The record gives the reactivity of an RNA of 177 nucleotides to DMS and 2A3. The reactions ran in a buffer of 150 mM KOAc, 10 mM MgCl2 and 150 mM bicine (pH 8.5), at 24 C. The 2A3 profile rests on 933 reads.
RNA sequence: GGGAACGACUCGAGUAGAGUCGAAAAUCCCUCCCUCCGCCGGGUCUGAAAGAACGAUUUUCGGCUGGAGAUGACAGCGCGGUUUUUGAGGACGUCUUUUGUCCGUGCGGUACCGCCCUCCUUGGUCCCAGACUGAUCCUUUCGAGGAUCAGUCUGGAAAAGAAACAACAACAACAAC
Reactivity to DMS in 0.01 (KOAc 150mM, MgCl2 10mM, bicine 150mM(pH8.5), 24C), signal-to-noise 2, nucleotides 027 to 126: u000c000c000c000u020c110c100c000u000c010c000g030c000c030g000g000g000u030c000u010g030a080a080a050g020a130a180c060g000a010u000u000u100u040c010g040g010c040u030g050g000a020g020a080u030g040a100c150a050g060c200g000c020g000g030u000u000u010u020u040g030a180g000g000a030c000g040u030c170u000u030u010u100g000u000c000c000g000u010g010c300g070g010u010a020c030c010g000c000c000c050u010c020c030u060u000g010g000u000c110
Reactivity to 2A3 in 0.01 (KOAc 150mM, MgCl2 10mM, bicine 150mM(pH8.5), 24C), signal-to-noise 3, nucleotides 027 to 126: u000c000c000c000u050c000c000c000u040c000c000g040c020c020g060g030g000u000c000u020g040a060a060a030g180a140a030c230g000a000u000u040u230u300c000g020g000c170u300g030g000a000g000a020u100g030a030c110a030g050c000g000c010g040g000u000u050u040u040u120g110a090g010g010a000c040g100u090c020u000u180u090u210g000u020c000c020g000u100g000c060g040g000u000a030c000c040g000c000c010c010u080c010c020u050u090g090g050u060c020